[RMDB]
RNA sequence: GGGAACGACUCGAGUAGAGUCGAAAAACGAUGCCUCAUCGAAGCAAAAGGUUCGCUGAAUUAUGAUUGCGUGGCACGCUCGGUCAAGCUCGUGUGGUAUCACACACAUGGCGCCAGGUCACACCAAGGAGAAAUAAAACUUCGGUUUUAUUUCUCCAAAAGAAACAACAACAACAAC
Reactivity to DMS in 0.01 (KOAc 150mM, MgCl2 10mM, bicine 150mM(pH8.5), 24C), signal-to-noise 2, nucleotides 027 to 126: a080c050g000a080u000g010c020c030u010c050a110u000c090g010a110a080g010c070a040a050a120a110g000g000u000u000c020g010c040u020g010a100a100u020u000a110u000g010a190u000u000g000c050g050u010g020g020c020a030c100g020c020u000c020g000g010u020c100a060a120g010c030u020c090g020u000g020u000g010g020u000a090u010c140a060c100a050c040a030c040a040u000g010g010c020g010c030c020a050g010g000u000c030a070c060a110c040c110a090a150
Reactivity to 2A3 in 0.01 (KOAc 150mM, MgCl2 10mM, bicine 150mM(pH8.5), 24C), signal-to-noise 3, nucleotides 027 to 126: a010c030g020a040u080g010c000c020u060c040a080u040c050g080a030a000g060c010a030a030a070a140g060g020u060u050c050g000c110u040g040a090a050u180u050a050u210g120a140u060u130g020c030g000u040g010g010c040a010c100g030c010u030c040g010g000u050c060a060a050g010c030u030c100g020u020g000u020g020g090u200a120u300c030a040c000a000c010a000c000a110u040g040g000c010g000c010c010a020g020g020u020c030a020c010a000c060c000a060a050